[RMDB]
RNA sequence: GGGAACGACUCGAGUAGAGUCGAAAAGGGGCGCUGUUUGUAGGAAGCAUGCUACAGAGUACAGAGAGUAUAUGGAAGCAUAUAAUCUUGUCUCUGCAUCAGGUUUCCGCCUUUGGUGUUAUAAGACCUGUUACUUUUGGUUCGCCAAAAGUAACAGAAAAGAAACAACAACAACAAC
Reactivity to 2A3 in 0.01 (KOAc 150mM, MgCl2 10mM, bicine 150mM(pH8.5), 24C), signal-to-noise 1, nucleotides 027 to 126: g040g000g010g000c040g010c040u040g060u110u080u070g040u050a140g000g010a000a010g000c010a000u010g000c000u020a000c000a010g000a020g030u130a020c020a000g280a000g010a010g070u010a010u000a000u010g030g020a020a040g030c000a000u020a000u010a010a050u000c000u000u030g000u010c000u000c000u010g000c000a010u000c010a000g020g000u010u020u000c000c020g000c000c000u050u010u010g040g000u050g020u110u090a190u050a200a050g060a060c000
Reactivity to DMS in 0.01 (KOAc 150mM, MgCl2 10mM, bicine 150mM(pH8.5), 24C), signal-to-noise 2, nucleotides 027 to 126: g000g000g000g010c050g020c020u000g010u020u000u020g020u000a180g030g000a030a010g010c010a040u010g010c040u000a040c000a020g000a030g010u030a020c010a070g000a010g000a030g010u000a000u000a000u000g010g000a160a130g010c000a010u000a000u000a030a020u010c000u000u000g010u000c000u000c000u000g000c030a010u010c010a030g030g020u000u000u000c010c000g010c080c050u000u000u000g010g030u010g010u000u000a080u020a110a120g010a130c160